[RMDB]
RNA sequence: GGGAACGACUCGAGUAGAGUCGAAAAGGCGGCUCUCCCCAGGCGGCGUCCGCGGAGACACCCAUCCGUGAACCCCAGGUCCCGGGCCGCCGGCUCGCCGCGCACCAGGGGCCGGCGGACAGAAGAGCAUUGCCACUAAUUUCGAUUAGUGGCAAUGAAAAGAAACAACAACAACAAC
Reactivity to 2A3 in 0.01 (KOAc 150mM, MgCl2 10mM, bicine 150mM(pH8.5), 24C), signal-to-noise 4, nucleotides 027 to 126: g090g010c020g020g000c010u010c030u050c010c010c000c020a030g030g020c060g000g010c040g030u030c000c020g010c000g020g010a060g050a010c050a130c050c020c020a040u020c010c010g010u020g050a040a050c020c010c010c020a040g040g070u080c020c020c020g010g070g010c000c000g000c010c000g000g000c000u010c030g100c020c020g020c010g010c020a060c050c050a050g000g000g010g000c000c000g000g010c000g000g010a010c010a020g220a160a010g010a010g030
Reactivity to DMS in 0.01 (KOAc 150mM, MgCl2 10mM, bicine 150mM(pH8.5), 24C), signal-to-noise 4, nucleotides 027 to 126: g030g020c020g010g000c020u000c060u000c040c020c000c010a100g010g000c060g020g020c200g020u000c040c030g050c030g020g010a040g010a190c150a120c100c080c050a140u000c010c010g000u000g010a090a070c020c050c000c030a160g000g000u010c000c020c030g010g010g020c010c010g000c010c000g000g000c000u010c020g000c000c050g030c050g030c080a130c080c060a160g010g000g000g020c000c000g000g000c010g010g010a090c110a080g010a110a060g000a090g010